[RMDB]
RNA sequence: GGGAACGACUCGAGUAGAGUCGAAAACGUCGUGAACUAGCGACAAUGCCUUAGCUCCAUCGUUAUCUAACCGAAACAUCGUGACUAGUCGUAGAAUAGAACCAGGAGAGGCCGCUGGCAAACAAAGACGUGGUGUCUGAUUCGUCGGACGCCACGUAAAAGAAACAACAACAACAAC
Reactivity to DMS in 0.01 (KOAc 150mM, MgCl2 10mM, bicine 150mM(pH8.5), 24C), signal-to-noise 9, nucleotides 027 to 126: c150g010u010c030g020u010g000a140a150c130u020a120g010c010g010a040c050a120a110u030g010c020c010u000u020a080g010c030u010c020c030a070u020c070g010u010u010a060u010c060u020a080a130c070c040g010a080a080a080c110a070u020c060g010u010g000a080c040u000a060g000u010c050g010u020a070g000a090a100u020a070g000a080a090c040c050a070g010g000a050g010a070g000g000c010c020g010c030u000g000g010c090a050a080a040c120a070a100a070g000
Reactivity to 2A3 in 0.01 (KOAc 150mM, MgCl2 10mM, bicine 150mM(pH8.5), 24C), signal-to-noise 9, nucleotides 027 to 126: c040g010u010c010g010u030g080a110a070c040u030a060g010c000g020a010c010a020a050u090g020c000c000u010u070a030g010c000u000c010c000a070u040c040g040u040u040a070u060c040u040a040a080c030c020g040a050a040a030c030a050u090c040g050u040g070a050c040u040a030g050u050c040g050u050a020g050a100a040u090a070g050a050a040c030c020a030g010g030a070g010a030g040g010c000c000g000c010u020g010g000c020a040a060a040c030a030a160a010g090

Annotation
An RNA of 177 nucleotides, treated with DMS and 2A3 and read out base by base. For 2A3, 40,937 sequencing reads were counted. The reactions ran in a buffer of 150 mM KOAc, 10 mM MgCl2 and 150 mM bicine (pH 8.5), at 24 C. The DMS profile rests on 34,389 reads.